Chemical mapping of a 207-nucleotide RNA with 2A3 and DMS. In probing experiments dimethyl sulfate is read out at A N1 and C N3, which are open when not base-paired. The reactions ran in a buffer of 150 mM KOAc, 10 mM MgCl2 and 150 mM bicine (pH 8.5), at 24 C. DMS adducts were read by reverse transcription with MarathonRT. 2A3 adducts were read by reverse transcription with SuperScript II with manganese. It was measured as part of the RMDB library OK3TST.
[RMDB]
RNA sequence: GGGAACGACUCGAGUAGAGUCGAAAAGGCUGAUGCCGGAGCCGAUACCGGAAUACGAGACCUAAUGUGCGGUCGAAUGCACUGAAGUACGAAAGUACGAAGAGGUCACACCGAGGACCGAGACUCGAUAUGCUCGCUAGAUGGAGCUUUACAUCAAGACUAUUAUGAUCUUCGGAUCAUAAUAGUCAAAAGAAACAACAACAACAAC
Reactivity to 2A3 in 0.01 (KOAc 150mM, MgCl2 10mM, bicine 150mM(pH8.5), 24C), signal-to-noise 4, nucleotides 027 to 156: g030g010c030u040g030a070u130g040c000c020g020g000a000g030c030c100g080a030u090a110c020c020g030g050a050a030u130a060c090g030a070g020a110c000c000u110a160a060u120g010u000g010c020g000g010u070c070g030a030a050u120g000c000a010c000u050g040a080a020g010u000a010c010g040a130a040a010g000u000a000c020g000a010a010g090a030g010g010u000c020a000c010a000c040c040g010a060g040g010a020c010c070g040a020g040a100c020u020c020g020a060u070a040u250g020c010u010c040g040c060u040a060g000a110u050g050g010a040g010c000u060u060u050a060c040a040u090c020a080a050
Reactivity to DMS in 0.01 (KOAc 150mM, MgCl2 10mM, bicine 150mM(pH8.5), 24C), signal-to-noise 3, nucleotides 027 to 156: g020g050c000u000g000a040u000g010c030c040g000g010a070g030c050c070g030a170u010a090c050c000g050g010a080a100u000a110c050g000a130g020a050c010c030u000a090a120u000g020u030g010c030g050g010u010c160g030a060a190u000g000c020a050c020u000g000a110a230g020u000a030c020g010a190a080a210g000u000a040c000g010a070a100g020a100g010g010u000c010a050c050a120c050c000g010a130g010g000a260c050c030g000a180g000a110c050u000c030g000a080u000a080u000g040c040u020c010g010c080u000a070g010a100u000g010g000a090g000c030u000u000u010a090c080a080u020c040a060a300